[RMDB]
RNA sequence: GGGAACGACUCGAGUAGAGUCGAAAAUCAAAAUGUCAAUCGUCAUAGGAAGUUUGGAGAGGACCUCUAGCAGGUCCGAAGCAUUAUCGCCCUGGACAAAGACAGUAGGAUUUCUUAUGAUCACCUCCCUCACGUACCUAUUCGUAGGUACGUGAGGAAAAGAAACAACAACAACAAC
Reactivity to DMS in 0.01 (KOAc 150mM, MgCl2 10mM, bicine 150mM(pH8.5), 24C), signal-to-noise 3, nucleotides 027 to 126: u020c060a030a110a080a150u010g000u010c020a090a080u000c220g010u010c000a010u010a000g000g020a150a110g010u000u010u020g030g000a040g000a300g000g000a050c010c000u000c010u090a070g030c090a010g000g000u010c000c000g000a100a300g010c010a050u010u010a030u010c080g000c300c000c030u000g000g000a010c010a070a150a090g000a020c000a030g010u020a180g000g000a070u000u000u000c070u020u020a040u000g020a160u020c070a070c050c040u020c180
Reactivity to 2A3 in 0.01 (KOAc 150mM, MgCl2 10mM, bicine 150mM(pH8.5), 24C), signal-to-noise 6, nucleotides 027 to 126: u030c010a010a010a030a140u060g020u030c030a040a120u080c060g010u020c040a080u130a110g010g020a080a110g020u100u120u130g210g100a070g020a030g040g000a000c000c000u000c020u040a150g020c180a000g070g000u000c000c000g000a000a000g060c010a020u100u130a080u260c080g040c020c000c000u000g010g000a010c000a010a040a000g030a010c010a000g060u080a060g040g080a030u010u060u000c010u070u170a120u170g060a070u040c010a080c100c000u040c010
Chemical mapping of a 177-nucleotide RNA with DMS and 2A3. Source: RMDB library OK1LIB, as collected in RNAgym. Conditions: 150 mM KOAc, 10 mM MgCl2 and 150 mM bicine (pH 8.5), 24 C. The DMS profile rests on 2,914 reads. For DMS the reverse transcriptase was MarathonRT.